[RMDB]
RNA sequence: GGGAACGACUCGAGUAGAGUCGAAAAACCCCUUCAGCGAACAGAAGACCCUGGUACCGGGGGGGAAUAGGCCAUAGUACGAGGGGAGAUGCUAGGAGUCGGGGGAAGCCAGAACGACUGGGAAAGGAAGCUUUGGACUUCGGUCCAAAGAAAAGAAACAACAACAACAAC
Reactivity to 2A3 in 0.01 (KOAc 150mM, MgCl2 10mM, bicine 150mM(pH8.5), 24C), signal-to-noise 4, nucleotides 027 to 129: a000c010c000c000c000u050u050c000a030g010c010g030a020a020c000a010g060a050a020g050a130c010c000c020u070g050g000u040a070c040c030g000g010g000g000g020g000g020a020a040u100a050g020g020c020c010a050u070a060g060u050a080c040g050a050g020g000g020g000a020g000a020u110g010c010u040a010g030g030a030g010u060c060g010g000g000g000g010a010a010g020c000c000a010g010a070a040c090g030a040c070u040g010g000g030a020a030a020g030g010a050a000g010
Reactivity to DMS in 0.01 (KOAc 150mM, MgCl2 10mM, bicine 150mM(pH8.5), 24C), signal-to-noise 4, nucleotides 027 to 129: a050c070c000c000c110u040u030c070a110g040c040g020a080a060c000a150g040a150a040g000a140c020c000c000u000g020g030u050a080c090c040g010g020g010g000g010g000g010a090a030u050a090g000g000c000c000a120u060a090g040u040a090c110g010a080g000g000g000g000a070g000a000u050g020c070u030a070g000g040a080g010u020c020g000g000g000g010g000a000a000g040c060c040a030g020a120a060c060g000a070c070u050g020g010g060a020a060a050g000g000a030a030g000